[RMDB]
Annotation: Structure probing data (2A3 and DMS) for a 177-nucleotide construct. The reactions ran in a buffer of 150 mM KOAc, 10 mM MgCl2 and 150 mM bicine (pH 8.5), at 24 C. DMS adducts were read by reverse transcription with MarathonRT. For DMS, 4,353 sequencing reads were counted.

RNA sequence: GGGAACGACUCGAGUAGAGUCGAAAACACCCGCAAUUCGUUGCGGGUGAGAGCACCACUCCUGCGGGAGUUAAGGCCAUACGGACAGCCGGGUGCAAAGGCAUAGCAGGUCCUUCGGGACCUGCAAUAUAACUCAGACAUUCGUGUCUGAGUUAUAAAAAGAAACAACAACAACAAC
Reactivity to 2A3 in 0.01 (KOAc 150mM, MgCl2 10mM, bicine 150mM(pH8.5), 24C), signal-to-noise 3, nucleotides 027 to 126: c010a000c000c000c000g020c000a020a070u080u090c200g070u060u010g000c010g000g000g000u000g000a010g000a010g020c000a010c010c000a010c010u020c010c000u050g040c260g060g010g010a010g010u040u190a080a050g030g020c010c000a040u080a150c090g100g040a020c040a040g060c020c000g000g010g020u010g000c010a040a040a000g030g000c050a050u180a080g000c000a000g020g020u010c000c000u010u070c180g030g010g020a000c020c020u000g000c000a010a000
Reactivity to DMS in 0.01 (KOAc 150mM, MgCl2 10mM, bicine 150mM(pH8.5), 24C), signal-to-noise 4, nucleotides 027 to 126: c010a010c000c000c000g020c000a010a020u000u020c170g020u000u000g020c010g000g010g020u000g000a030g020a080g010c010a030c000c010a100c000u000c000c000u000g030c120g030g020g010a010g010u000u010a070a090g010g020c000c020a190u010a110c140g010g000a080c130a130g000c010c010g000g010g010u000g010c010a060a050a080g000g010c070a060u010a060g000c000a000g010g000u000c000c010u000u020c160g030g000g000a020c000c020u000g010c000a020a010